Annotation:
The record gives the reactivity of an RNA of 177 nucleotides to 2A3 and DMS. The reactions ran in a buffer of 150 mM KOAc, 10 mM MgCl2 and 150 mM bicine (pH 8.5), at 24 C. For 2A3, 1,174 sequencing reads were counted. It was measured as part of the RMDB libraries RFM100 and RFMREP.
RNA sequence: GGGAACGACUCGAGUAGAGUCGAAAAUAACAAAAUUACCCGUGAGAUUAAUUGCGGUUGAACUUGUUUUUCGUGCUAGACUGAUGAUUCGCCCUUAUACAUAUUGGCUAACUUUCGGCUAAUCUUCCAACAAUGAAUGCUUCGGCAUUCAUUGUUGAAAAGAAACAACAACAACAAC
Reactivity to 2A3 in 0.01 (KOAc 150mM, MgCl2 10mM, bicine 150mM(pH8.5), 24C), signal-to-noise 3, nucleotides 027 to 126: u140a030a060c070a010a120a020a050u070u100a080c000c000c010g020u080g030a040g000a110u140u230a150a120u140u070g010c010g010g000u000u030g030a020a020c040u040u010g050u040u010u020u040u060c040g030u090g040c010u010a010g010a040c030u060g090a120u050g030a080u190u030c000g050c000c010c020u070u110a090u030a190c110a080u220a070u120u130g010g000c010u020a080a040c070u130u120u080c090g020g000c000u000a070a090u010c040u010u000c020
Reactivity to DMS in 0.01 (KOAc 150mM, MgCl2 10mM, bicine 150mM(pH8.5), 24C), signal-to-noise 2, nucleotides 027 to 126: u010a040a050c040a020a040a060a260u010u000a130c120c000c030g000u010g010a060g000a200u040u030a060a130u000u000g020c090g000g000u000u020g000a020a090c230u000u000g000u000u000u000u000u000c010g010u020g000c010u010a010g020a040c030u000g000a060u020g010a050u000u000c050g000c010c000c010u000u010a060u000a090c110a030u030a110u010u020g000g000c010u000a030a090c160u020u010u020c120g000g000c020u000a050a100u000c050u000u020c120